[RMDB]
RNA sequence: GGGAACGACUCGAGUAGAGUCGAAAACGCCGUAGAUGAACUCCUGGCAGAGCAUGUAGAUCAUAUUGUGGUGCUGCCGCUUUAUCCGCAAUUCUCCUGUUCUACGGUCGGUGCGGUAUGGGAUGAAGAAAGUAUGCUGGUUCGCCAGCAUACUUUCAAAAGAAACAACAACAACAAC
Reactivity to 2A3 in 0.01 (KOAc 150mM, MgCl2 10mM, bicine 150mM(pH8.5), 24C), signal-to-noise 2, nucleotides 027 to 126: c030g030c000c000g010u020a010g000a170u110g040a090a130c020u040c050c050u060g020g000c040a000g000a040g050c010a010u050g000u140a060g030a190u130c040a060u070a140u200u150g010u070g030g100u100g060c020u020g020c000c000g000c020u040u110u090a070u050c020c000g000c050a070a100u080u020c060u070c020c020u080g060u080u020c000u020a020c030g040g000u000c070g000g080u060g000c010g000g010u040a070u080g050g020g020a050u120g020a050a100
Reactivity to DMS in 0.01 (KOAc 150mM, MgCl2 10mM, bicine 150mM(pH8.5), 24C), signal-to-noise 3, nucleotides 027 to 126: c100g020c020c000g030u000a040g000a070u010g020a070a140c100u000c050c040u010g000g020c030a030g010a070g010c050a060u000g010u000a060g000a110u020c200a090u010a090u010u000g030u010g010g020u000g010c050u000g000c030c150g010c100u000u000u000a070u000c020c020g010c040a060a100u010u010c080u000c040c060u000g010u010u010c020u000a010c020g010g010u010c100g020g010u010g030c040g000g010u000a070u010g010g000g000a090u010g000a100a130